[RMDB]
RNA sequence: GGGAACGACUCGAGUAGAGUCGAAAAGCUGCUCAUUAGGAAUUACGGCUCCUUUUUUGUGGAUACAAUCUCUUGUAUACGAUAUACUUAUUGUUAAUUUCAUUGACCUUUACGCAAUCCUGCGUAAGUUAGGACAAUCAUUCGUGAUUGUCCUAACAAAAGAAACAACAACAACAAC
Reactivity to 2A3 in 0.01 (KOAc 150mM, MgCl2 10mM, bicine 150mM(pH8.5), 24C), signal-to-noise 9, nucleotides 027 to 126: g030c020u030g000c010u010c020a080u050u100a050g030g070a040a060u110u060a100c060g050g000c020u030c010c010u030u030u010u010u040u100g070u050g050g030a020u020a110c050a050a100u020c060u030c000u120u060g060u040a050u010a070c070g030a020u030a040u010a200c050u120u110a090u100u080g040u040u060a120a100u090u100u100c070a070u020u080g130a150c010c010u070u050u010a000c000g000c010a030a230u160c060c080u100g000c000g010u000a010a010
Reactivity to DMS in 0.01 (KOAc 150mM, MgCl2 10mM, bicine 150mM(pH8.5), 24C), signal-to-noise 5, nucleotides 027 to 126: g010c070u000g010c030u000c060a080u010u000a040g000g000a080a080u010u000a110c170g000g000c030u000c030c000u010u010u000u000u010u010g020u000g010g000a090u010a050c050a040a060u010c080u010c070u000u010g010u000a040u010a050c090g010a070u000a050u000a040c090u010u010a080u010u010g000u010u020a070a100u010u010u000c040a100u010u000g000a120c120c090u000u000u000a010c000g000c000a050a110u010c200c160u000g020c010g020u010a010a030